[RMDB]
RNA sequence: GGGAACGACUCGAGUAGAGUCGAAAAUUCCAUUUGAGUAUCCUGAAAUCGGGCUUUUCAGCAUGGAACGUACAUAUUAAAUAGUAGGAGUGCAUAGUGGCCCGUAUAGCAGGCAUUAACAUUCCUGAAAACGUGAAAAGGUUCGCCUUUUCACGAACUUAUAAUCCUACUUCGGUAGGAUUAUAAGAAAAGAAACAACAACAACAAC
Reactivity to DMS in 0.01 (KOAc 150mM, MgCl2 10mM, bicine 150mM(pH8.5), 24C), signal-to-noise 3, nucleotides 027 to 156: u000u000c010c000a160u000u000u000g010a130g030u000a040u000c040c010u000g000a050a150a210u000c040g030g020g030c040u000u000u000u000c040a270g000c050a050u020g000g020a070a050c040g010u000a160c050a100u000a170u000u000a060a100a230u000a110g040u000a030g060g020a130g010u010g020c020a140u010a110g030u010g010g010c010c000c020g020u000a050u000a180g050c050a010g020g020c080a060u000u000a070a070c020a100u000u000c000c000u000g000a080a040a080a160c030g030u000g000a000a020a020a020g020g010u000u000c300g010c010c010u000u000u000u000c010a000c000g010a010a050
Reactivity to 2A3 in 0.01 (KOAc 150mM, MgCl2 10mM, bicine 150mM(pH8.5), 24C), signal-to-noise 4, nucleotides 027 to 156: u050u010c020c000a030u140u070u120g050a050g030u070a080u110c000c010u010g030a020a040a060u050c000g000g000g000c020u120u080u090u090c050a010g010c010a010u050g040g060a160a040c040g080u100a010c040a030u140a080u170u290a200a190a140u150a070g030u020a000g000g140a050g010u040g000c030a060u070a120g100u060g040g010c000c000c020g010u040a020u010a010g020c010a000g000g020c000a000u010u010a030a000c000a040u050u100c000c000u020g070a080a070a030a040c020g000u000g000a000a000a000a000g030g000u010u050c150g100c000c000u000u000u000u000c000a000c000g000a000a000

Description:
Chemical mapping of a 207-nucleotide RNA with DMS and 2A3. The RNA was probed in 150 mM KOAc, 10 mM MgCl2 and 150 mM bicine (pH 8.5) at 24 C. Values cover nucleotides 27 to 156. For DMS the reverse transcriptase was MarathonRT. Source: RMDB library M2RFPK, as collected in RNAgym.